[RMDB]
An RNA of 177 nucleotides, treated with 2A3 and DMS and read out base by base. The data come from the RNA Mapping Database (RMDB), library RFM100. The RNA was probed in 150 mM KOAc, 10 mM MgCl2 and 150 mM bicine (pH 8.5) at 24 C.
RNA sequence: GGGAACGACUCGAGUAGAGUCGAAAAAAGGGAAAUCAUAACCUUAGGUAUGUUGUAUAAACAUAACGGCAAACUAGUUAUAGCUAAGGUGUUUCACUACGUUAUAACUUAAAUUAAAGUGCCACAGCACUUGCCCCAACUUCGGUUGGGGCAAGUGAAAAGAAACAACAACAACAAC
Reactivity to 2A3 in 0.01 (KOAc 150mM, MgCl2 10mM, bicine 150mM(pH8.5), 24C), signal-to-noise 2, nucleotides 027 to 126: a000a030g170g000g090a110a010a100u190c110a040u040a080a100c000c010u030u060a050g070g020u050a160u030g020u000u000g020u050a040u030a110a040a000c020a020u020a080a000c090g010g000c000a130a130a000c040u020a000g000u040u030a000u040a040g000c010u020a210a230g070g000u010g010u030u100u180c000a000c000u000a000c000g000u000u000a000u000a000a010c000u030u050a150a040a000u160u160a100a030a020g010u030g120c000c000a020c010a050g030
Reactivity to DMS in 0.01 (KOAc 150mM, MgCl2 10mM, bicine 150mM(pH8.5), 24C), signal-to-noise 2, nucleotides 027 to 126: a030a000g000g040g000a000a150a090u000c300a040u000a100a270c000c000u020u020a060g000g000u000a070u000g010u000u010g000u070a120u040a000a200a060c070a130u000a040a190c210g000g000c050a000a000a070c120u010a040g000u000u000a000u000a000g000c000u000a060a080g000g000u000g000u040u080u000c100a050c000u000a220c230g030u000u040a000u000a000a000c000u000u030a000a040a180u000u130a020a080a010g000u000g000c030c100a200c280a090g020